This 177-nucleotide RNA was probed chemically with 2A3 and DMS. In probing experiments dimethyl sulfate is read out at A N1 and C N3, which are open when not base-paired. The reactions ran in a buffer of 150 mM KOAc, 10 mM MgCl2 and 150 mM bicine (pH 8.5), at 24 C. The 2A3 profile rests on 9,809 reads. Source: RMDB library RFM100, as collected in RNAgym. 2A3 adducts were read by reverse transcription with SuperScript II with manganese.
[RMDB]
RNA sequence: GGGAACGACUCGAGUAGAGUCGAAAAAGCGACUGAGUACGCUCAGUCGCAACCACCGCAAGGGAGGGGAUUCCCCUCGGGUGUGGACGACACCCCGGCCCCAAGAGUGGAGGUACGCCUCCACUCAGCUUUCUACACACUUCGGUGUGUAGAAAGCAAAAGAAACAACAACAACAAC
Reactivity to 2A3 in 0.01 (KOAc 150mM, MgCl2 10mM, bicine 150mM(pH8.5), 24C), signal-to-noise 7, nucleotides 027 to 126: a000g000c000g000a010c000u000g000a000g010u040a050c240g020c110u010c000a000g000u000c000g000c000a000a000c010c010a040c000c010g040c080a090a090g100g020g020a090g050g030g020g040a140u180u230c000c000c000c010u020c010g000g000g010u120g000u030g060g110a130c100g020a000c020a010c000c000c000c000g050g000c010c000c000c020a030a040g000a000g000u000g000g010a010g000g020u040a030c220g110c020c000u000c000c000a000c000u000c000a000
Reactivity to DMS in 0.01 (KOAc 150mM, MgCl2 10mM, bicine 150mM(pH8.5), 24C), signal-to-noise 2, nucleotides 027 to 126: a110g000c030g010a010c020u000g020a030g000u020a070c250g000c020u000c010a020g000u000c020g040c000a020a020c010c010a150c000c040g000c190a070a140g010g000g000a030g010g000g000g010a190u020u000c000c000c010c110u020c040g000g000g000u000g020u000g010g040a170c300g000a150c010a000c000c010c000c020g000g000c000c000c000c010a160a060g000a000g030u000g000g000a000g000g020u030a110c230g000c010c000u020c000c000a000c010u000c000a020